[RMDB]
RNA sequence: GGGAACGACUCGAGUAGAGUCGAAAAGCUAGAGCGUUGUCGUAUUAGGCCGGAUAUGCGACGGGCUGCGAAGCGGUCGUCAGUUUGAUCCUGACCGGCCUAAGGAUCUUACUGGUGCUCUAGGAAAGGGUUGAUCGGUCUUCGGGCCGGUUAGCCCAAAAGAAACAACAACAACAAC
Reactivity to 2A3 in 0.01 (KOAc 150mM, MgCl2 10mM, bicine 150mM(pH8.5), 24C), signal-to-noise 9, nucleotides 027 to 126: g050c000u000a000g000a000g010c010g040u070u120g060u090c030g010u070a080u060u060a050g010g000c000c010g020g000a070u080a020u300g040c040g010a000c000g000g020g000c000u010g000c060g130a130a030g060c040g040g060u020c000g030u030c000a010g000u000u020u030g040a060u010c000c010u050g030a050c020c010g000g000c000c000u020a060a040g000g010a020u010c010u020u040a020c020u030g000g020u040g000c000u000c000u010a010g010g040a060a070a050
Reactivity to DMS in 0.01 (KOAc 150mM, MgCl2 10mM, bicine 150mM(pH8.5), 24C), signal-to-noise 9, nucleotides 027 to 126: g010c000u000a010g000a010g010c000g010u020u020g010u000c050g010u010a080u010u010a030g000g010c010c000g000g000a170u040a060u020g000c070g000a030c030g010g010g000c000u000g000c050g010a110a110g020c060g020g010u000c000g000u020c010a010g010u000u010u000g000a050u000c020c000u010g000a180c030c000g000g000c000c000u000a020a020g000g010a020u010c030u000u010a040c050u000g000g010u020g010c000u000c000u000a010g000g000a060a090a110
Structure probing data (2A3 and DMS) for a 177-nucleotide construct. 2A3 adducts were read by reverse transcription with SuperScript II with manganese. For 2A3, 49,644 sequencing reads were counted. Source: RMDB library OK1LIB, as collected in RNAgym.